[RMDB]
RNA sequence: GGGAACGACUCGAGUAGAGUCGAAAAUCUGUGAACCCUGUCAGGUCCGGAAGGAAGCAGCAGUAAGCAGAACCUCUCAUGUGCCAUGGGGUCGCCUGAACCGAGCUAACUGCUUAAGUAACGCCUGGGGUGGCUAAUCGACAGAAGGUGCACGGUAGUCUAUAUCAACCUUCGGGUUGAUAUAGACAAAAGAAACAACAACAACAAC
Reactivity to 2A3 in 0.01 (KOAc 150mM, MgCl2 10mM, bicine 150mM(pH8.5), 24C), signal-to-noise 3, nucleotides 027 to 156: u030c010u010g000u010g030a030a020c040c000c010u000g030u030c020a040g020g010u020c020c020g080g120a110a070g030g020a100a010g040c020a000g000c010a010g040u030a010a010g020c020a000g020a110a100c010c010u010c000u000c010a050u100g080u100g090c120c030a120u120g040g000g000g030u040c030g020c020c040u040g020a090a060c060c070g020a020g020c020u040a040a040c010u010g000c000u110u030a130a010g030u030a100a070c050g020c010c000u060g000g010g010g060u070g010g000c000u030a100a100u140c080g010a020c000a010g040a110a060g030g010u020g000c010a010c050g020g020u070a050
Reactivity to DMS in 0.01 (KOAc 150mM, MgCl2 10mM, bicine 150mM(pH8.5), 24C), signal-to-noise 2, nucleotides 027 to 156: u020c000u000g050u000g020a090a060c020c020c000u020g010u000c020a140g010g000u030c010c020g030g060a100a100g020g000a060a230g050c010a070g030c000a030g000u010a110a210g010c010a110g010a100a090c030c030u070c000u000c040a090u000g020u000g030c060c040a120u000g010g020g030g020u000c000g000c050c020u040g000a100a060c050c050g020a130g000c040u000a060a070c040u000g040c000u000u000a080a140g000u020a140a100c060g020c030c000u000g030g020g010g030u010g000g000c040u020a120a050u000c050g020a090c020a030g020a060a090g030g000u010g020c000a040c050g010g000u000a110
Background:
Chemical mapping of a 207-nucleotide RNA with 2A3 and DMS. The DMS profile rests on 3,415 reads. Reactivities are given for positions 27 through 156. 2A3 adducts were read by reverse transcription with SuperScript II with manganese. Source: RMDB library ARCHII, as collected in RNAgym.